Description:
Source: RMDB library RFM100, as collected in RNAgym. Structure probing data (DMS and 2A3) for a 177-nucleotide construct.
[RMDB]
RNA sequence: GGGAACGACUCGAGUAGAGUCGAAAAGAAAGAAACUGAGUAAGCUCCAAACUCAAUCCGUAAUCCAAGUAACAGACUUAAGAUGUUCAAUAUUGGAACUCUUUGGCAUCAAUUAAAAAAGAAACAAUUCGAUUUCAGUAUUCGUACUGAAAUCGAAAAAAGAAACAACAACAACAAC
Reactivity to DMS in 0.01 (KOAc 150mM, MgCl2 10mM, bicine 150mM(pH8.5), 24C), signal-to-noise 1, nucleotides 027 to 126: g030a110a070a070g000a090a000a090c060u020g020a000g000u010a100a220g010c030u010c000c000a090a070a130c020u000c040a010a030u080c080c000g010u000a070a060u020c000c020a090a100g000u000a100a090c180a150g000a100c090u000u010a020a000g030a010u070g020u020u000c010a050a140u070a090u070u030g010g010a010a000c050u000c000u000u020u000g000g000c060a100u040c090a010a020u040u000a000a040a170a060a030a000g000a110a080a060c050a020a010
Reactivity to 2A3 in 0.01 (KOAc 150mM, MgCl2 10mM, bicine 150mM(pH8.5), 24C), signal-to-noise 3, nucleotides 027 to 126: g020a000a130a010g090a030a170a030c060u020g000a000g030u020a010a040g050c000u060c030c000a090a030a030c020u000c010a000a120u020c010c050g040u060a010a030u000c000c030a060a020g010u030a110a120c060a090g130a050c010u030u010a010a020g020a020u100g000u080u000c090a140a070u130a200u300u230g080g030a030a030c030u020c030u060u000u080g000g000c010a050u000c050a050a090u240u300a120a100a010a000a000a030g030a030a090a030c040a000a050